Source: RMDB library OK2TRN, as collected in RNAgym. The record gives the reactivity of an RNA of 177 nucleotides to DMS and 2A3. Values cover nucleotides 27 to 126. The reactions ran in a buffer of 150 mM KOAc, 10 mM MgCl2 and 150 mM bicine (pH 8.5), at 24 C. The 2A3 profile rests on 2,918 reads.
RNA sequence: GGGAACGACUCGAGUAGAGUCGAAAAGACUGAGAGGACGAGGAAGUCUUUAGCAGUGGAGGCGGCAGGGCCUAGUGUCUGCCUCAGGCAGGGUGAGGGGGCUUCCUCCUGUGCCCCUUGGGGGCCCCUAGGAUAACAUCUUCGGAUGUUAUCCUAGAAAAGAAACAACAACAACAAC
Reactivity to DMS in 0.01 (KOAc 150mM, MgCl2 10mM, bicine 150mM(pH8.5), 24C), signal-to-noise 4, nucleotides 027 to 126: g010a120c060u000g000a130g010a100g010g000a090c130g020a050g000g010a070a030g010u000c030u000u000u000a150g010c100a070g000u010g000g000a030g010g010c030g010g000c040a050g010g010g010c100c070u010a060g020u000g010u000c010u010g030c010c010u010c030a040g000g000c100a050g000g000g010u010g010a150g000g010g010g010g000c030u000u000c010c020u010c020c140u000g010u010g010c010c000c000c030u000u010g000g020g010g020g020c020c060c090
Reactivity to 2A3 in 0.01 (KOAc 150mM, MgCl2 10mM, bicine 150mM(pH8.5), 24C), signal-to-noise 3, nucleotides 027 to 126: g050a020c050u050g010a000g030a030g110g000a020c040g010a040g040g030a010a020g030u040c000u110u140u070a080g020c040a060g060u100g100g040a010g000g030c030g030g000c010a040g110g010g110c010c090u130a150g060u020g040u090c070u150g010c010c010u030c010a010g080g020c090a010g030g010g080u160g080a180g020g020g000g000g010c010u000u010c010c000u000c000c010u040g040u090g060c000c000c010c050u040u080g090g000g010g110g070c050c020c020
For 2A3 the reverse transcriptase was SuperScript II with manganese. High 2A3 reactivity points to a flexible backbone, as in loops and unpaired stretches.